[RMDB]
RNA sequence: GGGAACGACUCGAGUAGAGUCGAAAACUCAAUGACUUCGGUCAUUGAGAAAGGACAAAAGUCCAACUGAGCAGCUAUGAGCUCAAACAUCGUCAUAGCAAAAAACACACACGUUCGCGUGUGUGAACCUUACUAACAUGUUCGCAUGUUAGUAAGGAAAAGAAACAACAACAACAAC
Reactivity to 2A3 in 0.01 (KOAc 150mM, MgCl2 10mM, bicine 150mM(pH8.5), 24C), signal-to-noise 5, nucleotides 027 to 126: c000u000c000a000a000u010g000a000c010u030u040c180g100g000u000c000a000u000u000g000a000g000a040a050a010g010g000a020c040a050a300a070a050g000u000c010c000a020a040c060u040g000a000g010c010a000g000c000u010a010u010g000a000g010c000u010c020a130a190a050c100a070u160c130g030u000c000a000u000a010g000c000a050a100a000a000a000a020c030a000c010a000c000a000c000g020u050u050c240g000c000g070u000g000u000g000u000g000a000a000
Reactivity to DMS in 0.01 (KOAc 150mM, MgCl2 10mM, bicine 150mM(pH8.5), 24C), signal-to-noise 5, nucleotides 027 to 126: c010u000c000a010a000u000g000a020c000u000u010c190g040g010u000c000a000u000u010g000a010g010a030a050a110g010g000a010c010a070a080a160a170g000u010c000c000a110a190c200u000g000a010g010c000a190g000c000u000a010u010g010a010g000c000u000c000a060a090a150c240a030u010c190g010u010c010a000u000a000g020c010a000a030a060a070a080a080c010a010c010a000c000a010c000g010u000u000c230g010c020g020u000g000u010g010u000g000a020a050